[RMDB]
RNA sequence: GGGAACGACUCGAGUAGAGUCGAAAAGAUAUGGACCGGCUCGAUAAGCUGGUAUCGGAAACGAUAUGCAGCUUUUGACGAGCCGUCCUAAGUCAAAGUCGAAACACCCUUCGGGGUGUUUCGACAACUUGACAAUGUGGUUCGCCACAUUGUCAAGAAAAGAAACAACAACAACAAC
Reactivity to DMS in 0.01 (KOAc 150mM, MgCl2 10mM, bicine 150mM(pH8.5), 24C), signal-to-noise 2, nucleotides 027 to 126: g000a050u000a250u000g000g000a020c080c080g040g000c010u000c000g010a050u000a020a030g020c000u000g000g000u000a000u000c000g030g010a040a080a120c000g010a020u000a000u010g030c000a000g020c000u000u000u000u010g000a240c050g000a000g000c000c000g000u000c010c000u000a010a090g000u000c030a110a090a110g010u000c000g010a000a030a010c000a010c000c000c000u010u000c240g020g020g040g020u000g000u000u000u000c010g010a000c000a000a020
Reactivity to 2A3 in 0.01 (KOAc 150mM, MgCl2 10mM, bicine 150mM(pH8.5), 24C), signal-to-noise 1, nucleotides 027 to 126: g000a000u060a060u070g000g020a020c150c270g050g000c010u000c000g060a080u030a300a000g020c010u010g000g040u050a010u050c010g010g040a030a030a050c060g000a000u020a010u160g300c000a000g010c000u000u010u050u090g070a030c010g010a020g000c010c010g000u000c000c000u000a050a000g010u000c040a100a100a030g000u000c000g030a000a020a010c000a000c010c020c000u020u070c300g010g000g000g000u000g000u000u000u000c000g000a000c010a000a010